[RMDB]
RNA sequence: GGGAACGACUCGAGUAGAGUCGAAAAAGCCAAAACUAUCUCUGUACACCGCCAAAUAUGCUCUGUUGGGCAAAAUCACCUGGGUUGAGACCUGCUUUGUCUUUCAUUCAUUCAUUGAAUACUCAUUGACUGCAUGGCCUGUAUCAGGCACUGUGCACCUAAUACUCCGUUUCGACGGAGUAUUAGGAAAAGAAACAACAACAACAAC
Reactivity to DMS in 0.01 (KOAc 150mM, MgCl2 10mM, bicine 150mM(pH8.5), 24C), signal-to-noise 1, nucleotides 027 to 156: a120g020c040c030a040a070a120a060c040u000a060u000c030u000c030u000g000u000a090c060a110c040c030g000c020c020a100a120a150u000a100u010g000c020u000c040u010g030u000u010g010g020g000c040a030a040a080a190u010c040a100c040c030u000g000g020g000u010u020g030a130g010a060c030c060u000g020c050u000u010u000g040u000c030u000u020u000c080a090u000u000c060a050u000u010c140a190u000u000g020a060a090u000a000c100u000c060a090u000u000g030a070c020u000g010c030a030u000g080g020c000c000u000g010u030a100u000c040a060g000g000c010a080c040u010g000u000g010c080a290
Reactivity to 2A3 in 0.01 (KOAc 150mM, MgCl2 10mM, bicine 150mM(pH8.5), 24C), signal-to-noise 4, nucleotides 027 to 156: a000g070c040c000a000a030a010a010c040u060a050u060c030u000c020u050g030u030a040c040a030c020c020g060c020c020a080a130a030u120a050u100g010c010u010c020u070g150u090u140g020g020g000c010a010a030a020a090u060c050a040c050c030u030g000g010g070u040u030g030a030g020a070c020c030u020g000c020u020u050u080g040u010c020u050u030u050c000a060u020u030c020a030u090u070c050a060u030u120g030a050a020u040a080c010u030c070a080u030u100g050a050c020u010g020c010a050u030g020g010c000c000u040g050u120a150u300c060a020g000g060c020a030c070u070g000u030g000c000a050
Notes: The record gives the reactivity of an RNA of 207 nucleotides to DMS and 2A3. For DMS the reverse transcriptase was MarathonRT. Source: RMDB library OK3TST, as collected in RNAgym. Values cover nucleotides 27 to 156. Conditions: 150 mM KOAc, 10 mM MgCl2 and 150 mM bicine (pH 8.5), 24 C.